An RNA of 177 nucleotides, treated with 2A3 and DMS and read out base by base. It was measured as part of the RMDB library OK1LIB. Reactivities are given for positions 27 through 126.

RNA sequence: GGGAACGACUCGAGUAGAGUCGAAAAAGCACACUGGGUUAGAGGAAAAUGUGGUGAAUGAAUGUGUGGUCUUCGUUACAUACACAACGUGUCAUGAUGGGUAACUAGGCGGAGUCCAUCGACAACCCUGGAUGGACGCAUUCGUGCGUCCAUCCAGAAAAGAAACAACAACAACAAC
Reactivity to 2A3 in 0.01 (KOAc 150mM, MgCl2 10mM, bicine 150mM(pH8.5), 24C), signal-to-noise 1, nucleotides 027 to 126: a000g080c090a020c000a000c010u000g010g000g000u180u060a030g000a050g070g010a030a040a060a110u060g010u010g000g070u030g000a000a090u160g010a210a000u070g130u120g000u000g040g000u030c000u140u130c050g030u030u070a040c000a030u000a030c060a000c000a120a060c180g060u040g000u030c050a070u040g000a000u020g000g000g020u140a100a090c010u000a070g100g040c030g000g000a000g020u000c000c000a000u000c000g000a010c000a000a110c000c010
Reactivity to DMS in 0.01 (KOAc 150mM, MgCl2 10mM, bicine 150mM(pH8.5), 24C), signal-to-noise 1, nucleotides 027 to 126: a000g030c200a140c020a140c030u170g000g000g000u000u000a130g000a260g000g030a070a000a080a200u040g050u050g030g000u000g000a040a000u000g030a030a110u000g030u000g050u000g020g000u060c000u000u000c100g020u050u030a050c070a060u020a090c000a050c110a050a050c090g000u000g000u000c010a010u060g000a090u000g000g000g000u000a080a100c190u000a160g000g020c120g000g050a170g000u000c000c050a040u000c050g000a020c050a000a100c040c000